An RNA of 177 nucleotides, treated with DMS and 2A3 and read out base by base. For 2A3, 793 sequencing reads were counted. The reactions ran in a buffer of 150 mM KOAc, 10 mM MgCl2 and 150 mM bicine (pH 8.5), at 24 C. Values are in units of 0.01, from 0 to 300, in steps of 10. For DMS, 1,582 sequencing reads were counted.
[RMDB]
RNA sequence: GGGAACGACUCGAGUAGAGUCGAAAAAUAAGAGUUGAACAGGUGCAAAGUGAAUAAGUAAAUUGUGAAAGUUCAGGGUUGACCAACAACCACACCAAGAUUAUUAACUUAUCAAAUGAACAGGUACGAGACCCUAUGAUUUCGAUCAUAGGGUCUCAAAAGAAACAACAACAACAAC
Reactivity to DMS in 0.01 (KOAc 150mM, MgCl2 10mM, bicine 150mM(pH8.5), 24C), signal-to-noise 2, nucleotides 027 to 126: a070u030a080a020g000a080g000u000u000g000a000a020c180a030g000g000u020g000c000a000a090a030g000u010g040a000a000u000a000a040g000u000a000a000a090u140u000g080u000g000a040a220a250g020u000u000c000a000g000g000g000u000u030g000a100c250c300a070a120c000a000a050c000c000a000c000a000c000c010a010a070g000a030u050u010a140u010u060a100a130c070u010u000a000u060c090a050a110a120u000g000a050a130c110a090g000g010u000a130c210
Reactivity to 2A3 in 0.01 (KOAc 150mM, MgCl2 10mM, bicine 150mM(pH8.5), 24C), signal-to-noise 2, nucleotides 027 to 126: a000u060a000a000g170a010g050u000u000g000a000a000c030a300g000g020u000g020c000a020a300a000g000u000g020a080a000u000a000a000g000u010a000a000a000u300u300g230u000g110a000a000a000g000u000u000c000a000g000g000g000u000u000g060a100c000c000a000a050c000a000a000c000c000a000c000a000c000c000a000a000g000a000u040u040a000u120u080a150a100c000u000u080a020u020c020a000a000a110u250g000a040a070c080a040g000g220u040a080c040